[RMDB]
RNA sequence: GGGAACGACUCGAGUAGAGUCGAAAACGACCUUCAAAGGUUACUACUACCAACUACCCAAGCAGACACUGACAAAGAGCAUUGACUCUGCGACGGCCGCCACGCCAGACAUUGCUAUGAUGCGUGGGAUGCGUAUCGUUGGCACGUCAGAGCCAGAUGAAAAGUACACCUUCGGGUGUACUUUUCAAAAAGAAACAACAACAACAAC
Reactivity to 2A3 in 0.01 (KOAc 150mM, MgCl2 10mM, bicine 150mM(pH8.5), 24C), signal-to-noise 1, nucleotides 027 to 156: c050g000a050c050c010u230u150c150a270a200a000g080g010u090u100a020c000u060a040c020u020a020c000c020a110a080c060u210a180c000c020c020a170a020g030c000a000g060a030c020a010c050u000g140a050c150a030a300a000g080a020g010c050a110u100u170g030a050c000u020c020u070g050c030g020a150c050g030g000c050c030g060c020c000a000c000g050c050c000a020g010a140c000a040u080u220g000c030u060a040u150g010a010u060g000c000g000u020g000g090g020a040u150g140c030g030u080a060u050c010g040u070u030g110g000c050a040c060g000u000c070a000g060a050g010c030c020a070g000a070
Conditions: 150 mM KOAc, 10 mM MgCl2 and 150 mM bicine (pH 8.5), 24 C. An RNA of 207 nucleotides, treated with 2A3 and read out base by base. The 2A3 profile rests on 403 reads. The data come from the RNA Mapping Database (RMDB), library OK3TST. For 2A3 the reverse transcriptase was SuperScript II with manganese. Values cover nucleotides 27 to 156.